[RMDB]
The data come from the RNA Mapping Database (RMDB), library OK2TST. The record gives the reactivity of an RNA of 177 nucleotides to 2A3 and DMS. DMS adducts were read by reverse transcription with MarathonRT. Values cover nucleotides 27 to 126.
RNA sequence: GGGAACGACUCGAGUAGAGUCGAAAACUUACCGGGCGCAUUCCUGAACCUCUACGCACGGCCCACCUGAUUGCCGGAGGCGUGACGCGCGGCAGCAGCGCGGGCCAGCGCGUUUAACAAGGCCUCCGGCUGGCUGUAACUUCGGUUACAGCCAGCCAAAAGAAACAACAACAACAAC
Reactivity to 2A3 in 0.01 (KOAc 150mM, MgCl2 10mM, bicine 150mM(pH8.5), 24C), signal-to-noise 2, nucleotides 027 to 126: c050u080u090a070c050c050g000g050g000c090g000c020a060u050u100c020c010u030g080a080a060c000c040u010c070u070a030c020g070c050a000c040g000g000c000c010c000a060c020c020u170g090a300u120u150g060c040c020g020g050a050g080g000c050g070u120g030a030c050g000c000g010c010g030g000c010a010g040c020a010g080c030g030c070g040g010g000c010c000a030g010c020g000c000g020u000u020u110a080a050c020a040a000g220g010c000c000u000c010c000
Reactivity to DMS in 0.01 (KOAc 150mM, MgCl2 10mM, bicine 150mM(pH8.5), 24C), signal-to-noise 2, nucleotides 027 to 126: c100u010u010a080c060c040g000g000g000c030g020c060a080u000u000c020c030u010g000a070a140c090c050u000c020u000a040c060g020c030a040c060g000g000c010c020c050a100c100c100u010g000a100u020u010g020c070c010g020g000a020g020g020c010g000u020g010a040c010g010c010g020c010g000g010c020a090g020c040a110g000c170g040c010g000g000g010c000c000a050g060c000g020c000g020u000u000u000a070a060c120a140a130g010g010c020c000u000c030c030